Chemical mapping of a 207-nucleotide RNA with 2A3 and DMS.
The reactions ran in a buffer of 150 mM KOAc, 10 mM MgCl2 and 150 mM bicine (pH 8.5), at 24 C.
2A3 adducts were read by reverse transcription with SuperScript II with manganese.
The data come from the RNA Mapping Database (RMDB), library OK3TST.
RNA sequence: GGGAACGACUCGAGUAGAGUCGAAAAAGUUCUAGUCCUCACCUAAGAUCAGACUGACACGGCCCUCAAAGCAAGAGCACUUGGUUGGGCUUUGUGGUGGGGAUCAGUGUCUCAUUUUUAGUCCCAAAUUAAAAACGAGAUUUUGGGCUGUACAUCAGAGUCAUUUAUCAUUCGUGAUAAAUGACUCAAAAGAAACAACAACAACAAC
Reactivity to 2A3 in 0.01 (KOAc 150mM, MgCl2 10mM, bicine 150mM(pH8.5), 24C), signal-to-noise 3, nucleotides 027 to 156: a000g060u120u000c030u030a010g020u000c000c000u020c020a000c000c000u060a090a020g030a110u090c090a030g090a190c090u160g000a020c010a020c070g020g000c000c010c000u030c060a070a050a010g040c020a070a060g070a020g080c040a040c100u060u040g020g050u110u040g030g050g080c020u010u030u130g040u020g000g000u040g010g010g000g010a020u050c000a000g020u000g030u010c020u000c060a070u070u130u080u010u220a010g080u120c000c000c000a000a010a030u070u070a050a070a030a040a030c100g020a080g000a140u000u070u040u010g000g020g000c040u060g080u120a060c050a090u110c080a040
Reactivity to DMS in 0.01 (KOAc 150mM, MgCl2 10mM, bicine 150mM(pH8.5), 24C), signal-to-noise 2, nucleotides 027 to 156: a120g020u010u010c030u000a070g010u010c000c010u000c010a080c040c020u010a070a100g000a060u000c020a140g000a150c110u010g010a100c010a090c090g020g000c000c010c000u000c030a040a090a130g000c080a020a130g000a140g020c070a090c050u000u000g000g010u010u010g000g020g010c000u000u000u000g040u000g010g070u000g010g010g020g000a010u000c010a080g000u010g060u000c020u000c020a040u000u010u000u000u000a040g020u000c040c040c110a100a070a110u010u010a010a000a030a040a030c030g000a050g020a180u000u010u020u000g010g010g040c060u000g000u010a100c140a180u000c050a300